[RMDB]
RNA sequence: GGGAACGACUCGAGUAGAGUCGAAAACUUAGUGAGUUCGCUCACUAAGGGACUCAGGAACCCAGGCUGGAGAGGGACCAAGUAGGAGGCUGGGCACCACCAACAUUCAGCGCUUCGGCGCUGAAAAACUAAGUCUGAAGUUCGCUUCAGACUUAGUAAAAGAAACAACAACAACAAC
Reactivity to DMS in 0.01 (KOAc 150mM, MgCl2 10mM, bicine 150mM(pH8.5), 24C), signal-to-noise 2, nucleotides 027 to 126: c010u010u000a000g000u000g020a010g020u000u010c280g010c000u020c000a000c000u000a010a010g000g000g010a150c050u000c040a180g000g010a110a140c050c070c070a070g010g010c040u010g000g010a110g000a080g000g000g010a080c070c030a050a070g000u000a090g000g000a070g010g030c070u020g000g040g000c010a100c030c010a080c080c030a040a030c150a160u000u000c010a000g000c010g000c000u000u000c170g000g000c030g000c000u000g000a000a010a020a150
Reactivity to 2A3 in 0.01 (KOAc 150mM, MgCl2 10mM, bicine 150mM(pH8.5), 24C), signal-to-noise 1, nucleotides 027 to 126: c000u000u010a000g000u000g000a000g000u020u130c180g080c100u010c000a010c000u000a010a010g020g010g020a020c020u030c110a040g090g000a060a050c000c030c000a020g050g000c040u040g050g040a070g000a060g050g010g020a020c030c030a030a020g010u050a070g050g100a040g030g000c030u020g010g030g000c010a040c020c020a020c000c000a020a080c010a030u000u040c000a000g000c010g010c000u000u090c270g080g000c000g000c010u040g000a020a000a000a000